[RMDB]
RNA sequence: GGGAACGACUCGAGUAGAGUCGAAAAAUAUGCCAAAUUUGAGUAUUAAUCAGAGAGGAAACAAACCAGCAAGAGCUUCACGUACUAAACCUGGAUAAUCAUUCCCAACUGAUUCCAACAUAAGCUCGGAUGGUGAGGAGUUCGCUCCUCACCAUCCAAAAGAAACAACAACAACAAC
Reactivity to 2A3 in 0.01 (KOAc 150mM, MgCl2 10mM, bicine 150mM(pH8.5), 24C), signal-to-noise 2, nucleotides 027 to 126: a000u100a020u020g100c000c000a050a150a140u220u150u240g030a030g000u120a000u020u300a030a200u050c060a010g050a030g020a000g060g000a070a070a070c010a020a140a030c000c030a000g060c050a020a020g030a000g160c000u060u070c150a040c090g120u070a040c070u050a280a000a000c000c000u010g000g000a030u010a280a030u110c000a010u000u000c040c010c000a090a020c020u000g000a210u030u000c000c000a000a120c070a200u090a050a080g010c000u010c080
Structure probing data (2A3) for a 177-nucleotide construct. It was measured as part of the RMDB library OK1LIB. For 2A3, 606 sequencing reads were counted.